[RMDB]
RNA sequence: GGGAACGACUCGAGUAGAGUCGAAAAGCCAACUUCGGUUGGCAAAACCUUUGUGUACUAGACCCAUAGGGAGCUCCAAGACCAUCCCAUUGGGAUGGUUGGAGCAUCGAUCUAUGGGAGAACUAGUACACUCUGGUAAAAGAACACUUCGGUGUUCGAGAAGCUGGUAGUUCGCUACCAGCUUCUCAAAAGAAACAACAACAACAAC
Reactivity to 2A3 in 0.01 (KOAc 150mM, MgCl2 10mM, bicine 150mM(pH8.5), 24C), signal-to-noise 1, nucleotides 027 to 156: g000c000c000a000a030c000u070u110c300g120g000u000u000g010g030c020a070a070a000a070c000c000u040u000u020g000u000g010u020a010c010u010a030g220a210c000c000c000a010u000a000g050g000g000a020g000c000u000c000c000a080a090g130a230c000c000a000u020c000c000c150a300u250u300g010g000g000a000u060g000g010u010u000g000g000a000g000c000a010u070c000g040a050u000c000u000a000u030g000g030g000a000g000a000a000c000u000a000g000u000a000c000a000c000u010c000u000g010g040u060a090a070a060a010g020a000a000c000a000c010u070u130c290g060g000u000g020u000u030c000